Background
The data come from the RNA Mapping Database (RMDB), library OK3TST. Structure probing data (2A3) for a 207-nucleotide construct.
[RMDB]
RNA sequence: GGGAACGACUCGAGUAGAGUCGAAAAUUGGAAAGUAAAGAUGCUUCAGCGAUUUACUAUUUUAAGCAACAUAUUAUUCUAAACUCGGAUCAACUGGAAUCUGCAUCCAAAAAUUAUGACAUGACCUUUCAUACAAUAAUGAGCGACGUUGACCGAAGAUAAAAUCGCUGUUCGCAGCGAUUUUAUCAAAAGAAACAACAACAACAAC
Reactivity to 2A3 in 0.01 (KOAc 150mM, MgCl2 10mM, bicine 150mM(pH8.5), 24C), signal-to-noise 2, nucleotides 027 to 156: u110u010g070g000a090a040a000g040u020a020a000a030g040a140u020g040c000u240u230c050a020g040c050g060a000u020u060u070a040c020u070a210u070u110u020u130a090a040g050c040a000a090c040a040u160a150u300u220a120u220u140c070u220a000a120a080c040u000c060g030g100a260u000c040a000a040c070u050g000g070a050a140u060c020u110g020c060a040u020c010c000a060a130a000a000a060u170u070a050u110g010a000c100a180u200g050a100c010c000u170u120u000c030a020u010a050c030a000a060u070a100a050u070g050a010g030c090g010a090c070g000u000u000g000a010c000c010g040a050a000